Chemical mapping of a 177-nucleotide RNA with 2A3 and DMS. 2A3 adducts were read by reverse transcription with SuperScript II with manganese.
[RMDB]
RNA sequence: GGGAACGACUCGAGUAGAGUCGAAAAGGAUCCUUCGCAGUCAGUAAGGUAACUUUGUCAUGGAAAGUUACCAGAGACUGGACCUAAUGUCAUUUACCUUACUGAUGACAUUGUCUAUUUAGGAUCGCUACAAGUGAGUAUUCGUACUUACUUGUAGAAAAGAAACAACAACAACAAC
Reactivity to 2A3 in 0.01 (KOAc 150mM, MgCl2 10mM, bicine 150mM(pH8.5), 24C), signal-to-noise 9, nucleotides 027 to 126: g020g000a000u000c010c000u020u030c070g010c030a000g000u000c000a010g040u080a130a010g010g000u000a000a010c020u040u040u060g130u190c090a120u140g120g130a030a010a010g010u010u010a020c000c000a000g000a010g000a010c000u010g000g020a010c000c030u080a020a010u010g000u000c000a010u010u020u100a100c030c030u100u130a090c080u100g010a010u010g000a000c010a020u030u030g010u000c040u060a170u090u120u040a010g000g000a000u000c000g000
Reactivity to DMS in 0.01 (KOAc 150mM, MgCl2 10mM, bicine 150mM(pH8.5), 24C), signal-to-noise 9, nucleotides 027 to 126: g000g000a010u000c000c000u000u000c250g020c060a030g020u000c000a040g010u010a300a120g000g010u000a000a010c030u000u000u000g020u010c210a130u010g010g000a030a020a010g000u000u000a010c010c010a040g000a150g000a010c010u000g000g000a050c100c300u000a020a010u000g000u000c000a010u000u000u000a070c190c190u000u010a080c240u000g000a010u000g000a020c010a010u000u000g000u000c030u000a110u000u000u000a010g020g010a010u000c000g000